[RMDB]
Conditions: 150 mM KOAc, 10 mM MgCl2 and 150 mM bicine (pH 8.5), 24 C.
An RNA of 207 nucleotides, treated with 2A3 and read out base by base.
RNA sequence: GGGAACGACUCGAGUAGAGUCGAAAACUAGAUAGCAAGGAGGCCAUCCGAAACGUACGUCACAGCGAGAUACUAGGAUGGGAAAGCAUGCCACGAUGUUGCUGCCGCUAGGAUGGGAAAGCAUGCGAAGGUAUGUUAACGUACGGAAACCAUCCAGGACGAGCCUAUGUUUCGACAUAGGCUCGUCAAAAGAAACAACAACAACAAC
Reactivity to 2A3 in 0.01 (KOAc 150mM, MgCl2 10mM, bicine 150mM(pH8.5), 24C), signal-to-noise 1, nucleotides 027 to 156: c000u070a030g140a130u090a010g110c050a100a120g010g000a000g000g050c010c010a030u000c000c020g050a100a010a000c010g050u150a020c000g010u000c100a050c050a150g090c100g040a060g010a140u120a010c030u130a090g000g000a030u030g000g000g000a010a000a010g080c010a000u010g020c110c000a090c080g030a110u220g030u180u050g000c010u030g020c010c020g000c090u080a060g050g020a120u060g020g050g000a150a010a000g000c000a000u010g000c000g020a030a000g110g000u000a000u020g060u110u140a040a050c000g000u000a090c010g030g050a000a050a000c050c000a000u050c000c020a000g000

Overview
For 2A3, 577 sequencing reads were counted.